An RNA of 177 nucleotides, treated with 2A3 and DMS and read out base by base. The reactions ran in a buffer of 150 mM KOAc, 10 mM MgCl2 and 150 mM bicine (pH 8.5), at 24 C. Source: RMDB library OK1LIB, as collected in RNAgym. DMS adducts were read by reverse transcription with MarathonRT. For 2A3, 2,091 sequencing reads were counted. The DMS profile rests on 1,576 reads.
RNA sequence: GGGAACGACUCGAGUAGAGUCGAAAAUUUGCGUGAGCUUGUCUAAAUCUGACAAAUUCGGGUAUUUUGCAGUGUAGACCAGCCCUAGAUCUGUUAGUGCCUUGACAACGUCAUUUAGAUCUUCGCGUCUGCCUAGAAUCUUCGGAUUCUAGGCAGAAAAAGAAACAACAACAACAAC
Reactivity to 2A3 in 0.01 (KOAc 150mM, MgCl2 10mM, bicine 150mM(pH8.5), 24C), signal-to-noise 4, nucleotides 027 to 126: u030u030u100g020c030g030u070g010a050g010c070u090u170g030u000c000u000a040a110a180u020c050u020g030a070c030a000a060a020u110u100c060g060g000g030u060a040u060u120u030u070g010c000a010g020u030g070u110a010g040a040c000c020a050g040c000c000c000u070a080g040a070u050c010u010g020u050u080a030g030u020g020c010c000u080u200g030a050c070a090a000c080g000u000c010a010u050u040u000a020g000a020u010c010u030u040c060g000c030g040
Reactivity to DMS in 0.01 (KOAc 150mM, MgCl2 10mM, bicine 150mM(pH8.5), 24C), signal-to-noise 2, nucleotides 027 to 126: u060u010u020g000c050g050u040g000a090g010c300u010u010g030u000c000u000a000a080a050u020c140u030g000a040c030a000a070a110u000u050c080g010g060g000u000a030u000u030u000u010g000c060a000g010u010g000u020a080g000a080c040c060a020g000c000c020c020u030a070g000a020u030c000u000g000u010u010a010g000u010g010c000c010u010u020g000a040c300a060a210c290g030u030c070a020u000u030u000a000g000a000u000c190u020u000c040g000c100g020